Structure probing data (2A3 and DMS) for a 177-nucleotide construct.
The data come from the RNA Mapping Database (RMDB), library OK1LIB.
Conditions: 150 mM KOAc, 10 mM MgCl2 and 150 mM bicine (pH 8.5), 24 C.

RNA sequence: GGGAACGACUCGAGUAGAGUCGAAAAAUAGUUAGUUUAGUGUAAAUAGGAUUUAUUGAGAAUGGAAGUCAGGCCAGAUUAAUGCUGCCACCGGAAGUUGAGUAGACGGUGCUGCCUGCGGCUCAACAGCAUAUUAAUUAUUCGUAAUUAAUAUGCUAAAAGAAACAACAACAACAAC
Reactivity to 2A3 in 0.01 (KOAc 150mM, MgCl2 10mM, bicine 150mM(pH8.5), 24C), signal-to-noise 6, nucleotides 027 to 126: a000u160a030g080u080u010a020g040u060u120u060a090g030u050g060u120a080a130a130u110a080g050g080a050u080u110u100a120u120u210g060a090g060a090a100u100g140g080a010a000g000u000c000a000g000g020c000c010a010g010a040u090u180a210a060u300g030c000u000g000c000c000a000c000c010g030g010a120a140g010u000u000g020a010g000u010a000g000a000c030g000g000u000g020c000u000g000c000c000u000g000c010g010g000c010u000c000a000a000c000
Reactivity to DMS in 0.01 (KOAc 150mM, MgCl2 10mM, bicine 150mM(pH8.5), 24C), signal-to-noise 7, nucleotides 027 to 126: a090u020a080g010u010u010a080g010u010u000u010a110g010u010g010u010a030a050a060u020a060g020g010a300u010u010u010a040u030u010g000a100g000a100a090u020g000g000a050a010g000u000c010a000g000g010c000c010a010g000a060u010u040a100a080u060g010c010u000g000c010c000a010c000c010g000g000a090a120g000u000u000g000a010g000u000a060g020a040c010g000g010u000g000c010u000g000c000c000u000g000c010g020g010c000u000c010a000a010c010